[RMDB]
RNA sequence: GGGAACGACUCGAGUAGAGUCGAAAAGAUAUCACCUUCUUCUCUGAGGAUGGUCAAAAGACGUCUUUGGGAAAACCGAACACUGGAUUCAGGAGUAAUCACUUUGCUUACGAAAGUGGAGAGAAGGCAAAAUCGGAAUAUUCGUAUUCCGAUUUUGAAAAGAAACAACAACAACAAC
Reactivity to 2A3 in 0.01 (KOAc 150mM, MgCl2 10mM, bicine 150mM(pH8.5), 24C), signal-to-noise 9, nucleotides 027 to 126: g070a040u180a030u160c040a060c020c000u010u030c010u070u020c050u000c010u040g020a010g040g020a030u110g220g030u020c030a130a160a100a170g030a020c020g010u010c000u010u030u040g010g010g000a020a070a050a060c020c020g030a060a010c050a020c060u090g070g050a150u100u080c040a060g000g070a030g050u060a050a080u080c020a030c120u040u040u110g040c030u070u090a090c050g060a070a020a010g010u020g010g010a030g000a000g000a030a010g020g000
Reactivity to DMS in 0.01 (KOAc 150mM, MgCl2 10mM, bicine 150mM(pH8.5), 24C), signal-to-noise 9, nucleotides 027 to 126: g000a080u030a070u020c090a200c020c010u000u000c010u010u010c020u010c020u010g010a030g000g000a020u010g020g010u010c050a130a080a100a110g010a040c030g010u000c010u000u000u010g000g010g010a070a050a100a120c030c020g000a090a090c040a080c050u010g000g000a180u010u010c070a100g010g010a060g010u010a060a060u020c130a060c110u020u010u000g020c080u010u020a090c120g000a050a040a030g010u000g000g000a070g010a050g000a020a020g000g000